[RMDB]
RNA sequence: GGGAACGACUCGAGUAGAGUCGAAAAGGUAUGUUCGCAUACCAUAUGACCUUUGUGUAAGCGACCCAUGGAGCUAGAACGAGGACCCAUUGGGUCCUCAAUAGCGAUGAAAUGGGAGAACGCUUACACUCUGGUGAAAACAGUGAUUCGUCACUAAUCGCAUCUAAUCUUUCGAGAUUAGAUGCGAAAAAGAAACAACAACAACAAC
Reactivity to DMS in 0.01 (KOAc 150mM, MgCl2 10mM, bicine 150mM(pH8.5), 24C), signal-to-noise 1, nucleotides 027 to 156: g030g020u000a000u000g050u000u010c300g040c020a040u010a000c000c010a090u000a080u010g020a070c030c000u000u000u000g010u000g030u000a000a000g040c000g010a300c050c000c000a010u030g000g000a210g050c000u000a040g010a170a260c200g010a020g070g030a000c010c000c000a300u020u040g080g080g020u000c000c000u010c010a030a110u000a050g050c000g000a210u040g020a170a120a020u000g020g030g030a050g000a050a110c040g000c000u000u000a010c000a020c000u000c030u020g040g030u000g000a190a080a100a030c070a020g020u000g000a070u000u010c300g000u000c000a000c020u020a110a300
Reactivity to 2A3 in 0.01 (KOAc 150mM, MgCl2 10mM, bicine 150mM(pH8.5), 24C), signal-to-noise 3, nucleotides 027 to 156: g030g010u010a000u010g060u090u130c230g000c110a000u000a000c000c010a020u080a190u220g090a000c000c000u000u000u000g000u000g000u000a010a000g000c010g130a300c000c000c020a000u020g000g030a020g020c000u010a020g020a280a110c130g000a020g000g000a000c000c000c020a040u150u300g000g040g000u020c000c000u000c000a000a030u010a000g000c000g040a050u040g020a000a030a000u020g000g090g000a050g010a050a000c000g000c000u000u000a000c000a000c000u000c000u010g010g020u040g050a010a080a060a050c080a030g020u010g030a020u050u170c110g060u060c080a000c040u090a040a130